[RMDB]
RNA sequence: GGGAACGACUCGAGUAGAGUCGAAAAUACAGAAGCAGGGGCAAGGCCAAUGGACAUAUCAAAUUUAUCAAGAGCCAUUUAAAAAUCUGAAAACAGGAAAAUAUGCAAGAAUGAGGGGUGCCCACACCCCGGGACGUGAUUUCGAUCACGUCCCGGGAAAAGAAACAACAACAACAAC
Reactivity to 2A3 in 0.01 (KOAc 150mM, MgCl2 10mM, bicine 150mM(pH8.5), 24C), signal-to-noise 1, nucleotides 027 to 126: u100a070c080a020g200a020a000g060c240a070g050g000g050g030c000a040a030g120g090c000c150a000a020u000g040g000a000c050a020u250a000u160c200a000a130a180u280u300u000a220u220c120a000a200g080a000g000c000c000a000u050u080u050a030a000a000a000a050u000c000u030g030a000a000a000a120c020a030g000g240a000a130a000a000u120a000u130g000c000a000a170g010a000a100u250g000a240g180g000g000g000u000g000c100c000c050a020c000a000c020
Reactivity to DMS in 0.01 (KOAc 150mM, MgCl2 10mM, bicine 150mM(pH8.5), 24C), signal-to-noise 1, nucleotides 027 to 126: u060a260c160a020g000a130a030g060c060a000g000g000g000g020c020a110a050g000g010c020c050a060a080u000g000g030a100c140a080u000a000u000c070a160a040a130u040u010u010a130u040c200a070a100g010a000g000c000c060a040u040u000u000a010a100a000a080a070u010c000u050g000a060a000a040a010c150a030g030g000a050a050a080a060u000a010u000g010c050a040a000g020a120a050u000g010a060g000g030g060g000u000g020c010c000c000a000c050a050c050